[RMDB]
This 207-nucleotide RNA was probed chemically with 2A3. The 2A3 profile rests on 1,985 reads. For 2A3 the reverse transcriptase was SuperScript II with manganese. It was measured as part of the RMDB library RNAMAK.

RNA sequence: GGGAACGACUCGAGUAGAGUCGAAAAGAUAUGGACGAUUGGGAGUCACCAUACACCGAAGAACUAGGGUCGGAAACGACCCUAGGGAGGUGUACAUUUGACGAAGAACAAUCGUCCUAAGUCAAAACCUACCCAAAUCUUCGGAUUUGGGUAGGAACUUGGAAUAUUCGUUCGCGAAUAUUCCAAGAAAAGAAACAACAACAACAAC
Reactivity to 2A3 in 0.01 (KOAc 150mM, MgCl2 10mM, bicine 150mM(pH8.5), 24C), signal-to-noise 1, nucleotides 027 to 156: g020a010u060a010u140g000g000a000c000g000a000u000u010g010g010g020a040g020u020c010a010c060c060a030u060a050c000a000c000c000g130a190a010g010a030a000c000u000a000g020g000g000u000c000g010g000a030a060a010c010g010a020c000c000c000u000a000g000g000g000a010g000g000u000g010u010a020c030a020u090u080u120g010a010c020g100a150a030g020a060a000c000a010a000u000c000g000u000c000c000u010a010a010g000u000c030a000a050a020a160c000c000u000a000c000c000c010a000a010a000u000c010u040u060c260g070g000a000u000u000u000g000g030g000u000a000g000g000a000a000